Description: The data come from the RNA Mapping Database (RMDB), library M2PK90. Chemical mapping of a 177-nucleotide RNA with DMS and 2A3. DMS adducts were read by reverse transcription with MarathonRT. The reactions ran in a buffer of 150 mM KOAc, 10 mM MgCl2 and 150 mM bicine (pH 8.5), at 24 C. For DMS, 4,456 sequencing reads were counted.

[RMDB]
RNA sequence: GGGAACGACUCGAGUAGAGUCGAAAAACUUUUAGCGUUUGCAAGACGCUGUUCUUGCAAUGAUCUGGAUUUACCGCACGGAGGUCCGAAAUCCAGAUCAACAUUUCGGACCUCCGCGCUAAUAAAAUAAUAAGUACAACUUCGGUUGUACUUAUUAAAAAGAAACAACAACAACAAC
Reactivity to DMS in 0.01 (KOAc 150mM, MgCl2 10mM, bicine 150mM(pH8.5), 24C), signal-to-noise 4, nucleotides 027 to 126: a060c080u000u000u000u000a020g010c070g010u000u000u000g020c010a020a000g010a020c010g010c250u000g000u010u000c000u000u000g000c000a010a020u000g010a110u000c020u000g010g000a070u010u020u010a100c050c040g030c030a030c010g000g010a020g000g010u000c010c010g000a020a010a010u010c120c140a150g010a110u010c200a060a080c180a070u000u000u000c010g000g000a040c010c000u000c000c010g010c010g000c020u010a020a060u010a050a060a040a080
Reactivity to 2A3 in 0.01 (KOAc 150mM, MgCl2 10mM, bicine 150mM(pH8.5), 24C), signal-to-noise 2, nucleotides 027 to 126: a000c020u030u070u070u080a030g000c020g040u020u020u110g030c000a000a000g000a010c040g120c300u110g050u130u020c000u000u010g000c000a000a020u060g030a110u050c040u040g020g010a040u030u090u250a120c040c000g000c000a010c010g000g020a010g000g000u000c020c010g020a030a010a000u070c060c010a010g030a070u100c000a000a010c000a020u000u040u020c000g000g000a010c000c040u010c000c000g000c010g000c000u030a110a110u070a150a130a000a030